This 170-nucleotide RNA was probed chemically with DMS and 2A3.
Values cover nucleotides 27 to 129.
For DMS, 10,568 sequencing reads were counted.
The reactions ran in a buffer of 150 mM KOAc, 10 mM MgCl2 and 150 mM bicine (pH 8.5), at 24 C.
[RMDB]
RNA sequence: GGGAACGACUCGAGUAGAGUCGAAAACUCCCCGCUCCUGGAGAAGGGAGACUCGGGAACGCCUAGCAUCUGAGGGACGAAGCCGCCCCCGGGCGCUCCCCUCGGAGGUCCACUGGGUGGGUUCACAACAGGCAUUGGUUCGCCAAUGCCAAAAGAAACAACAACAACAAC
Reactivity to DMS in 0.01 (KOAc 150mM, MgCl2 10mM, bicine 150mM(pH8.5), 24C), signal-to-noise 3, nucleotides 027 to 129: c110u020c010c000c000c150g020c030u030c000c060u030g040g030a150g000a090a080g000g000g000a050g030a090c060u010c120g090g030g030a070a060c110g050c030c020u010a090g020c160a100u020c040u000g000a040g000g000g000a190c130g040a050a230g040c050c040g010c020c010c010c030c030g040g020g030c000g010c010u000c000c000c000c000u000c050g050g080a000g030g050u040c030c020a000c040u000g000g000g000u010g020g040g040u030u040c000a140c210a070a070c100a030
Reactivity to 2A3 in 0.01 (KOAc 150mM, MgCl2 10mM, bicine 150mM(pH8.5), 24C), signal-to-noise 6, nucleotides 027 to 129: c050u040c000c000c000c000g010c000u010c000c010u090g140g070a130g020a100a090g060g040g000a000g000a010c070u050c080g020g000g020a050a030c030g010c010c010u040a040g060c040a130u020c020u030g010a020g030g010g000a020c070g060a040a000g080c100c050g020c000c010c000c010c020g040g000g000c030g020c010u020c000c000c000c000u020c000g000g000a000g000g060u060c050c020a050c050u040g000g000g010u060g020g030g000u040u040c070a040c030a110a050c010a050